[RMDB]
RNA sequence: GGGAACGACUCGAGUAGAGUCGAAAAGAUAUGGAUAUCGUAGGGAGCUCCCAUUCGGAAACGAAUGAUGAGCUUUGAUCUACUGAUAUCCUAAGUCAAAACUCCUCGAAGUUCGCUUCGAGGAGAACGGUUAUAUGCUGUUCGCAGCAUAUAACCGAAAAGAAACAACAACAACAAC
Reactivity to 2A3 in 0.01 (KOAc 150mM, MgCl2 10mM, bicine 150mM(pH8.5), 24C), signal-to-noise 2, nucleotides 027 to 126: g010a010u020a020u070g000g010a000u010a010u010c020g000u000a010g020g000g000a020g000c000u010c030c010c000a010u010u000c000g010g030a000a010a000c000g000a000a010u040g030a060u060g010a000g000c000u260u130u070g000a000u040c000u000a010c020u030g010a000u000a000u020c000c000u000a000a010g000u000c030a000a050a170a300c010u000c000c000u000c010g010a010a000g020u110u240c270g140c240u000u000c000g000a010g000g000a000g000a000a010
Reactivity to DMS in 0.01 (KOAc 150mM, MgCl2 10mM, bicine 150mM(pH8.5), 24C), signal-to-noise 2, nucleotides 027 to 126: g020a020u000a070u030g000g000a010u000a010u010c000g040u000a010g010g000g010a000g010c000u010c010c250c000a000u000u010c000g010g010a010a010a020c000g000a010a000u000g000a040u010g000a020g030c000u000u010u000g010a010u010c000u010a010c010u010g010a020u000a010u000c000c000u000a000a070g000u010c010a110a070a160a240c020u000c000c010u000c000g000a050a000g020u010u010c280g010c010u000u000c000g030a030g000g000a000g010a000a030